[RMDB]
RNA sequence: GGGAACGACUCGAGUAGAGUCGAAAAGUGGCGAUCUGCUGCUCGAUCAUCGGGAGCCGCACCCGAAACACCGUCUGGCCGUUGCCCGACUCGGCCGUGACCGAGCCGCGAUGCGCCUUGACGAUCGCCGUAUUGGAUGGUUCGCCAUCCAAUACGGAAAAGAAACAACAACAACAAC
Reactivity to DMS in 0.01 (KOAc 150mM, MgCl2 10mM, bicine 150mM(pH8.5), 24C), signal-to-noise 3, nucleotides 027 to 126: g030u010g010g020c000g010a060u000c000u020g050c000u000g000c000u010c030g000a070u000c070a130u010c010g010g000g000a200g000c050c030g010c090a210c010c020c020g000a110a140a080c110a120c140c100g010u000c060u000g000g020c020c050g010u000u010g010c030c070c010g000a070c120u000c020g000g010c020c060g000u010g000a040c010c020g000a020g010c010c080g000c010g000a030u000g000c020g030c020c020u000u000g000a070c100g000a140u000c120g020
Reactivity to 2A3 in 0.01 (KOAc 150mM, MgCl2 10mM, bicine 150mM(pH8.5), 24C), signal-to-noise 2, nucleotides 027 to 126: g110u060g010g000c000g030a080u020c080u170g000c010u000g010c020u020c000g070a100u120c020a030u050c010g040g010g050a050g070c070c060g020c060a040c000c010c000g050a100a140a000c090a040c030c050g010u040c030u010g000g000c030c000g050u060u110g000c020c040c010g190a180c020u000c010g010g020c000c050g030u040g050a100c010c000g000a010g020c000c000g000c000g020a020u070g080c030g000c040c000u000u080g010a010c020g030a080u100c070g000
Structure probing data (DMS and 2A3) for a 177-nucleotide construct. The 2A3 profile rests on 4,249 reads. Reactivities are given for positions 27 through 126. It was measured as part of the RMDB library OK2TRN. As a SHAPE reagent, 2A3 marks flexible, mostly unpaired nucleotides at the ribose 2'-OH. Conditions: 150 mM KOAc, 10 mM MgCl2 and 150 mM bicine (pH 8.5), 24 C.